[RMDB]
RNA sequence: GGGAACGACUCGAGUAGAGUCGAAAAGGGAGACGGGGAUCCCGGGCUUACCCACGGGAACUGCUGGGUUCCCCUGAUGUCCAGUCCCUCCCCGCUCCUGGAGAAGGGAGACUCGGGAACGCCUAGCCCAAUGUAAUGGGUUCGCCCAUUACAUUGGAAAAGAAACAACAACAACAAC
Reactivity to 2A3 in 0.01 (KOAc 150mM, MgCl2 10mM, bicine 150mM(pH8.5), 24C), signal-to-noise 2, nucleotides 027 to 126: g030g000g000a030g020a030c020g010g000g010g000a000u040c020c010c000g010g050g020c030u070u090a090c010c000c020a020c080g030g000g000a060a030c050u100g050c060u100g110g020g000u000u000c000c000c010c020u000g020a060u110g100u010c010c010a000g050u000c000c000c010u030c000c010c000c000g010c000u000c000c010u010g040g050a210g060a130a080g060g040g000a030g000a010c040u030c050g010g010g040a030a030c050g040c040c010u040a030g040c000
Reactivity to DMS in 0.01 (KOAc 150mM, MgCl2 10mM, bicine 150mM(pH8.5), 24C), signal-to-noise 2, nucleotides 027 to 126: g010g010g020a040g000a300c270g000g010g020g010a050u000c020c080c040g000g010g000c020u010u020a110c030c100c030a090c300g030g020g000a060a060c140u000g000c120u010g000g000g000u000u000c010c000c000c050u000g010a100u010g010u020c120c090a130g000u020c000c000c030u010c000c000c000c130g000c010u000c020c040u010g010g010a160g000a100a150g000g000g000a110g010a030c100u010c110g000g010g000a060a040c130g010c080c040u000a070g000c230
About this RNA: The record gives the reactivity of an RNA of 177 nucleotides to 2A3 and DMS. The reactions ran in a buffer of 150 mM KOAc, 10 mM MgCl2 and 150 mM bicine (pH 8.5), at 24 C. 2A3 adducts were read by reverse transcription with SuperScript II with manganese. For 2A3, 2,562 sequencing reads were counted. Values cover nucleotides 27 to 126.